[RMDB]
RNA sequence: GGGAACGACUCGAGUAGAGUCGAAAAACCCGAAUCCGGACGAUCUACGCAUGGACAAGAUGAAGCGUGCCGAAAGGCACGUGGAAGUCUGUUAGAGUUGGUGUCCUACAAUACCCUCUCGUGAUCUAUGUGUAGGGGUGAAAGGCCCAUCGAGUCCCCUAACGUACUACUUCGGUAGUACGUUAGGAAAAGAAACAACAACAACAAC
Reactivity to 2A3 in 0.01 (KOAc 150mM, MgCl2 10mM, bicine 150mM(pH8.5), 24C), signal-to-noise 2, nucleotides 027 to 156: a000c000c000c020g050a050a060u040c090c040g010g000a000c020g010a020u040c010u000a010c010g000c030a000u010g020g010a010c020a010a030g000a020u250g020a030a020g030c000g000u000g000c000c000g080a080a100a120g000g000c000a000c000g010u000g010g000a070a010g010u000c010u020g110u110u180a030g000a000g010u070u130g040g000u030g040u070c010c040u070a040c100a030a010u050a070c000c010c010u020c010u010c000g040u080g090a240u030c020u060a010u010g010u000g000u010a020g000g000g000g000u020g050a170a060a010g150g020c000c000c000a050u180c060g040a020g020u010c010c010
Reactivity to DMS in 0.01 (KOAc 150mM, MgCl2 10mM, bicine 150mM(pH8.5), 24C), signal-to-noise 2, nucleotides 027 to 156: a040c030c010c000g000a100a070u000c080c050g020g020a170c030g010a170u010c000u000a030c040g000c040a050u020g010g000a090c010a120a070g000a020u000g000a300a300g010c020g030u000g010c020c010g030a160a120a300g050g000c000a000c000g030u000g020g010a240a300g000u000c010u000g020u010u000a110g000a080g030u000u000g030g020u000g000u000c000c080u000a050c100a040a070u000a040c000c010c000u000c000u020c010g000u000g010a110u000c030u000a030u000g000u000g040u000a030g000g000g000g000u000g030a050a110a150g000g010c020c010c020a180u000c040g010a100g000u000c040c030